[RMDB]
RNA sequence: GGGAACGACUCGAGUAGAGUCGAAAACUGCAGUCUGUAUUACAGCUUGUAAUUUAGGGGGCGCUGUUUGUAGGAAGCAUGCUACAGAGUACAGAGAGUAUAUGGAAGCAUAUAAUCUUGUCUCUGCGUCUACUAUAACCUUCGGGUUAUAGUAGACAAAAGAAACAACAACAACAAC
Reactivity to DMS in 0.01 (KOAc 150mM, MgCl2 10mM, bicine 150mM(pH8.5), 24C), signal-to-noise 3, nucleotides 027 to 126: c050u000g000c050a050g010u000c020u000g010u000a120u010u010a050c030a070g010c070u010u010g020u000a030a070u000u010u010a090g010g000g030g010g030c180g020c040u000g000u000u000u000g010u000a070g010g000a080a110g030c050a080u010g010c040u000a140c010a010g000a070g010u010a020c040a050g010a030g010a040g010u000a010u000a020u000g000g000a170a070g000c010a010u000a010u000a010a040u000c030u000u000g000u000c010u000c000u000g010c250
Reactivity to 2A3 in 0.01 (KOAc 150mM, MgCl2 10mM, bicine 150mM(pH8.5), 24C), signal-to-noise 2, nucleotides 027 to 126: c020u050g000c020a000g060u010c000u040g100u090a140u070u100a070c010a020g060c020u150u140g090u150a200a280u100u150u300a140g030g010g000g020g000c030g000c030u020g020u020u090u080g020u020a000g010g030a050a010g010c010a000u080g020c000u020a030c010a010g010a010g000u080a020c000a010g180a020g000a000g100u010a010u000a000u040g020g050a060a010g020c030a000u020a000u000a030a040u000c020u020u020g000u000c000u000c000u020g030c040

This 177-nucleotide RNA was probed chemically with DMS and 2A3. For 2A3 the reverse transcriptase was SuperScript II with manganese. The reactions ran in a buffer of 150 mM KOAc, 10 mM MgCl2 and 150 mM bicine (pH 8.5), at 24 C. For DMS, 3,606 sequencing reads were counted. High DMS reactivity at an A or C suggests that its Watson-Crick edge is free.